Structure probing data (2A3 and DMS) for a 177-nucleotide construct. The RNA was probed in 150 mM KOAc, 10 mM MgCl2 and 150 mM bicine (pH 8.5) at 24 C. In probing experiments dimethyl sulfate is read out at A N1 and C N3, which are open when not base-paired. Source: RMDB libraries RFM100 and RFMREP, as collected in RNAgym. For DMS the reverse transcriptase was MarathonRT.
RNA sequence: GGGAACGACUCGAGUAGAGUCGAAAAUUAGACCGUCGUGAGACAGGUUAGUUUUACCCUACUGAUGGCGUGUCAUUGUAAUAGUAAUUGAACUUAGUACGAGAGGAACCGUUCAUUCACGUAAUUGGAGUCAUAAUUAAUUCGUUAAUUAUGACUCAAAAGAAACAACAACAACAAC
Reactivity to 2A3 in 0.01 (KOAc 150mM, MgCl2 10mM, bicine 150mM(pH8.5), 24C), signal-to-noise 9, nucleotides 027 to 126: u090u050a050g030a030c000c000g000u010c010g010u040g090a060g020a110c110a120g010g010u030u020a020g020u000u040u090u140a100c010c010c000u020a040c020u060g090a040u040g030g000c020g020u140g020u060c040a040u030u150g070u080a100a170u070a220g130u070a040a120u050u070g000a000a000c000u000u000a000g010u010a010c000g000a010g000a030g120g010a010a000c010c000g010u000u000c010a000u030u060c040a020c060g040u070a100a110u100u160g100
Reactivity to DMS in 0.01 (KOAc 150mM, MgCl2 10mM, bicine 150mM(pH8.5), 24C), signal-to-noise 9, nucleotides 027 to 126: u010u010a090g020a010c000c000g020u000c000g020u020g000a170g010a050c130a080g020g010u000u000a040g010u010u010u000u000a120c060c000c010u000a160c070u010g010a040u000g000g010c030g010u010g010u000c030a100u010u010g010u010a070a100u010a090g010u000a040a040u010u010g010a020a010c010u000u000a060g010u000a150c010g000a250g000a200g010g000a090a100c190c290g000u000u000c000a020u000u000c070a030c050g010u010a060a140u020u010g010